[RMDB]
RNA sequence: GGGAACGACUCGAGUAGAGUCGAAAAACUGGUGAACACCACAACGUCAUAAUGUACCGCGCGAUGACAACGUUCGGUUAUUGUGGCGCCCCUCUCCUCACCACAAACAACGCUGAAUCUGUGAUUCUUGGUAUCCAUAUGGCUGGGAACGGUCAUGAUGGACGUAUUACUUCGGUAAUACGUCCAUAAAAGAAACAACAACAACAAC
Reactivity to 2A3 in 0.01 (KOAc 150mM, MgCl2 10mM, bicine 150mM(pH8.5), 24C), signal-to-noise 3, nucleotides 027 to 156: a010c060u060g030g000u040g040a100a030c050a090c150c030a090c140a190a060c020g010u000c010a010u010a040a000u070g080u130a020c010c000g010c000g020c010g060a150u240g110a140c120a100a040c090g010u020u020c010g000g000u000u010a010u010u010g000u010g000g010c000g040c000c000c000c000u020c020u020c020c010u020c010a040c010c000a010c070a030a130a000c040a090a020c070g050c110u080g020a060a070u030c030u110g130u070g060a060u050u050c010u080u060g030g000u110a100u020c000c000a050u040a040u160g010g000c010u030g040g030g030a070a090c000g020g010u030c010a020u090g020
Reactivity to DMS in 0.01 (KOAc 150mM, MgCl2 10mM, bicine 150mM(pH8.5), 24C), signal-to-noise 1, nucleotides 027 to 156: a080c070u000g020g050u010g020a120a080c080a050c010c030a110c060a090a070c020g020u000c010a030u000a020a020u000g020u000a030c000c020g000c000g030c020g030a170u010g010a300c060a070a080c000g030u000u010c020g080g000u000u000a040u000u010g030u000g000g020c020g000c000c010c030c020u010c040u000c030c110u010c040a060c000c000a010c020a070a110a110c050a060a110c060g010c050u000g020a000a090u000c090u000g040u000g000a060u000u000c030u000u020g000g030u000a130u000c040c010a080u000a060u020g000g020c000u020g000g020g000a140a120c000g050g000u010c030a040u000g010
The record gives the reactivity of an RNA of 207 nucleotides to 2A3 and DMS. The RNA was probed in 150 mM KOAc, 10 mM MgCl2 and 150 mM bicine (pH 8.5) at 24 C. The 2A3 profile rests on 3,042 reads. Source: RMDB library OK3TST, as collected in RNAgym. DMS adducts were read by reverse transcription with MarathonRT.